[RMDB]
RNA sequence: GGGAACGACUCGAGUAGAGUCGAAAAUUGAAGGUAAAACAGCCUGUGGGUGAAACACACCCACAGGGCCCUUUGGGCGCUAGCACUCUGGUAUCACGGUACCUGUGUGCGCCUGUUUUACCGAAGGAGCGGCGGAUGUUCGCAUCCGCCAAAAGAAACAACAACAACAAC
Reactivity to 2A3 in 0.01 (KOAc 150mM, MgCl2 10mM, bicine 150mM(pH8.5), 24C), signal-to-noise 3, nucleotides 027 to 129: u120u100g050a090a020g000g010u000a000a000a000a000c010a000g020c000c000u010g000u000g000g010g000u020g080a060a140a000c130a000c000a010c050c000c000a000c000a000g000g000g000c000c020c000u030u050u110g020g000g000c010g000c080u080a030g000c000a000c000u050c020u020g010g010u000a000u020c030a040c210g130g020u010a000c030c000u030g020u000g000u010g000c020g000c020c000u000g000u000u000u000u000a010c000c000g000a000a010g080g020a020g010c030
Reactivity to DMS in 0.01 (KOAc 150mM, MgCl2 10mM, bicine 150mM(pH8.5), 24C), signal-to-noise 3, nucleotides 027 to 129: u090u050g040a120a080g000g020u040a000a000a100a010c000a080g070c040c020u030g050u000g020g000g040u020g010a090a070a070c240a180c020a050c030c000c000a010c000a020g010g000g040c010c000c010u000u000u100g020g010g000c020g000c070u020a110g030c000a000c030u030c050u010g000g030u000a030u000c020a070c260g000g000u010a040c020c010u000g040u040g010u020g040c040g010c000c000u060g000u000u030u030u010a000c010c010g030a060a100g000g020a040g030c120
Conditions: 150 mM KOAc, 10 mM MgCl2 and 150 mM bicine (pH 8.5), 24 C.
The record gives the reactivity of an RNA of 170 nucleotides to 2A3 and DMS.
Values cover nucleotides 27 to 129.
The data come from the RNA Mapping Database (RMDB), library 15KLIB.
For 2A3, 7,890 sequencing reads were counted.